[RMDB]
RNA sequence: GGGAACGACUCGAGUAGAGUCGAAAAGGGACGCCUUUAGAAGAAGAGGCUAGGCGGUAUUCCGGUGUGGGAUACUUGGUAAUAUGUAACGCUAAUUGCAUAAGAUUGUAGGACGGAAUUUACAGUCAAAACGGUCCUGCGUUCGCGCAGGACCGAACUAGUUUAGCUGCUUCGGCAGCUAAACUAGAAAAGAAACAACAACAACAAC
Reactivity to 2A3 in 0.01 (KOAc 150mM, MgCl2 10mM, bicine 150mM(pH8.5), 24C), signal-to-noise 1, nucleotides 027 to 156: g040g020g030a060c070g000c000c040u090u120u120a130g020a110a000g030a100a010g020a050g050g080c050u040a030g050g040c040g000g020u050a010u130u020c000c000g070g060u110g050u240g050g000g000a030u040a120c020u050u100g000g000u070a090a040u090a120u120g060u120a080a010c060g000c090u040a010a080u130u070g000c020a010u010a020a110g020a110u120u140g000u070a000g000g070a060c100g030g030a030a000u020u090u220a080c010a000g040u070c040a020a080a000a080c050g020g000u000c000c010u030g020c010g000u010u050c200g030c000g000c050a000g000g010a000c000c000g000a000a010